[RMDB]
RNA sequence: GGGAACGACUCGAGUAGAGUCGAAAAUGUGAUCUGAUCCGAGGCCGCACAGGAUCGGUACGCGGCGCUCGAUCCGGUACUACAUAGCGCGGCGCGUACGUACUGUAUAUCGAUCGAUCGGCCGUACAGCUGAGCUAGAGUUCGCUCUAGCUCAGCUAAAAGAAACAACAACAACAAC
Reactivity to DMS in 0.01 (KOAc 150mM, MgCl2 10mM, bicine 150mM(pH8.5), 24C), signal-to-noise 2, nucleotides 027 to 126: u010g010u020g010a050u000c010u000g000a090u000c080c020g000a200g010g030c030c030g020c130a140c080a190g040g000a050u000c040g040g000u020a010c040g000c000g030g010c020g000c110u000c060g010a070u010c090c080g010g010u000a060c120u000a070c110a060u010a120g010c200g000c040g000g010c030g030c070g010u010a010c110g020u010a110c090u000g000u000a080u010a110u010c060g000a050u000c010g010a050u000c000g000g010c020c030g000u000a090c180
Reactivity to 2A3 in 0.01 (KOAc 150mM, MgCl2 10mM, bicine 150mM(pH8.5), 24C), signal-to-noise 2, nucleotides 027 to 126: u140g040u040g050a040u020c080u110g020a010u080c020c070g010a070g070g000c030c000g030c000a030c000a120g070g040a040u080c040g000g010u000a030c060g000c020g000g100c030g010c000u000c020g040a020u000c070c060g110g030u090a110c030u020a010c040a120u190a050g080c100g000c030g140g040c040g040c010g030u020a020c030g010u010a030c030u050g050u090a090u030a060u220c010g030a010u010c000g020a020u010c000g230g000c040c000g000u020a060c020
Chemical mapping of a 177-nucleotide RNA with DMS and 2A3. Values are in units of 0.01, from 0 to 300, in steps of 10. Values cover nucleotides 27 to 126. The reactions ran in a buffer of 150 mM KOAc, 10 mM MgCl2 and 150 mM bicine (pH 8.5), at 24 C. The DMS profile rests on 1,658 reads.